[RMDB]
RNA sequence: GGGAACGACUCGAGUAGAGUCGAAAACGGGCUGGUCGAACCGGAGCCGAUCGCCGAGGCGCGGCAGGACGACUUCGACUACGGGCAUGCGUGCGAGCUCGCUGCCCGCGAGUACUGGCUGUUCAAGAAUCCCGGGUGGCGGCUGUCCCGCGGUGAGCGAUAGUACUUAUUUCGAUAAGUACUAUCGAAAAGAAACAACAACAACAAC
Reactivity to 2A3 in 0.01 (KOAc 150mM, MgCl2 10mM, bicine 150mM(pH8.5), 24C), signal-to-noise 2, nucleotides 027 to 156: c030g030g000g000c030u040g010g040u010c030g010a070a040c050c010g010g030a020g020c010c000g060a230u150c030g000c030c020g070a220g060g060c040g000c000g030g000c010a020g040g040a010c030g020a040c000u040u030c040g050a010c020u080a040c030g010g010g060c060a080u190g030c030g010u060g040c080g040a040g080c070u050c150g010c020u020g000c000c010c000g010c080g000a000g000u100a130c040u020g010g050c040u070g060u140u120c020a030a020g010a080a020u050c030c000c000g020g030g000u050g050g040c000g000g000c020u010g030u110c030c030c000g010c030g070g050u150g050a060g020
Reactivity to DMS in 0.01 (KOAc 150mM, MgCl2 10mM, bicine 150mM(pH8.5), 24C), signal-to-noise 1, nucleotides 027 to 156: c060g000g020g030c020u010g010g050u000c030g030a090a070c030c010g030g010a180g010c000c000g030a080u020c050g020c020c000g010a150g040g000c040g000c040g050g040c050a180g000g000a110c020g010a110c040u030u000c050g000a180c000u000a060c000g020g000g010c040a080u000g000c060g030u010g010c080g000a080g020c030u000c030g010c070u010g020c000c000c000g020c000g000a080g010u010a120c090u010g010g010c070u000g020u000u000c050a060a120g010a180a190u000c040c010c000g020g010g000u010g020g020c020g030g010c010u010g010u000c010c010c030g030c000g000g030u000g020a260g010